[RMDB]
RNA sequence: GGGAACGACUCGAGUAGAGUCGAAAAUAAGCACCUCGUUAGGUGAGGCGGCUACACGAACAUAGGCCACUGACCCCGAACGUCGAGAGACGCCCCGGGUCAGGACAGCUCUUCCUGGCUUAAGGGUAAAAUCACAACGUCUUCGGACGUUGUGAAAGAUACACUUACGGUUCGCCGUAAGUGUAUCAAAAGAAACAACAACAACAAC
Reactivity to DMS in 0.01 (KOAc 150mM, MgCl2 10mM, bicine 150mM(pH8.5), 24C), signal-to-noise 1, nucleotides 027 to 156: u020a070a130g010c010a110c000c000u000c020g040u010u000a110g030g050u020g000a110g010g030c040g010g000c010u000a060c090a160c040g000a120a090c090a160u010a180g010g050c010c000a120c000u030g000a080c040c000c010c050g000a040a020c020g000u000c030g010a300g000a300g000a060c000g020c000c010c050c120g010g000g010u000c020a000g000g020a070c000a070g030c090u000c010u010u020c010c020u000g010g000c010u000u000a080a000g030g010g000u010a030a030a080a140u000c010a010c010a010a070c000g040u000c010u000u000c300g090g050a030c000g000u010u000g030u000g000a000a000a030
Reactivity to 2A3 in 0.01 (KOAc 150mM, MgCl2 10mM, bicine 150mM(pH8.5), 24C), signal-to-noise 3, nucleotides 027 to 156: u140a030a010g030c020a010c030c010u040c050g110u120u300a090g020g070u110g020a010g020g030c030g050g000c040u080a050c110a010c110g160a210a000c020a130u150a120g080g000c020c030a040c040u030g020a010c010c050c010c020g020a080a020c010g000u000c010g010a030g010a010g020a160c000g020c010c010c010c000g020g000g000u000c000a010g010g010a000c050a020g020c000u020c010u100u050c010c000u000g020g000c000u090u150a070a070g020g000g020u060a050a060a020a100u010c000a010c000a010a000c000g000u000c000u040u060c190g150g010a000c020g020u000u000g000u000g000a000a000a000

An RNA of 207 nucleotides, treated with DMS and 2A3 and read out base by base.
For 2A3, 2,241 sequencing reads were counted.